Structure probing data (2A3 and DMS) for a 177-nucleotide construct. The reactions ran in a buffer of 150 mM KOAc, 10 mM MgCl2 and 150 mM bicine (pH 8.5), at 24 C. It was measured as part of the RMDB library OK1LIB. The 2A3 profile rests on 6,812 reads.

RNA sequence: GGGAACGACUCGAGUAGAGUCGAAAAGCCGCGUGAUAUAAGGCAUAGCUCUGGGAGAGAAGAAUUUAAGGAUACGCGGCCUCUCCGGGGCGAUAGAGCUAGCCUUGAUAUCGAAUAUUUUCGCCCCCUAUAUUAGAAUAUUCGUAUUCUAAUAUAGAAAAGAAACAACAACAACAAC
Reactivity to 2A3 in 0.01 (KOAc 150mM, MgCl2 10mM, bicine 150mM(pH8.5), 24C), signal-to-noise 7, nucleotides 027 to 126: g000c000c000g000c020g010u090g080a080u080a060u050a230a010g020g000c080a180u010a000g000c000u000c010u050g090g050g010a010g030a000g010a070a030g050a120a100u110u210u200a250a070g080g020a020u040a120c010g000c000g000g000c000c000u000c000u000c000c000g000g000g000g000c000g000a010u060a020g000a000g000c000u000a000g000c010c000u010u040g090a070u060a050u120c050g040a130a050u100a170u120u120u020u030c000g000c000c000c000c010
Reactivity to DMS in 0.01 (KOAc 150mM, MgCl2 10mM, bicine 150mM(pH8.5), 24C), signal-to-noise 5, nucleotides 027 to 126: g020c000c000g020c010g020u010g010a060u000a050u040a030a000g000g000c000a100u010a010g010c000u000c000u000g010g010g020a020g010a010g010a240a140g010a120a090u030u030u030a090a140g010g010a160u030a080c020g010c000g000g000c010c000u000c000u000c000c030g020g010g010g040c000g010a020u020a010g000a010g000c000u000a010g000c000c000u010u000g000a060u050a020u010c040g000a110a080u050a070u010u000u010u000c010g010c000c000c000c180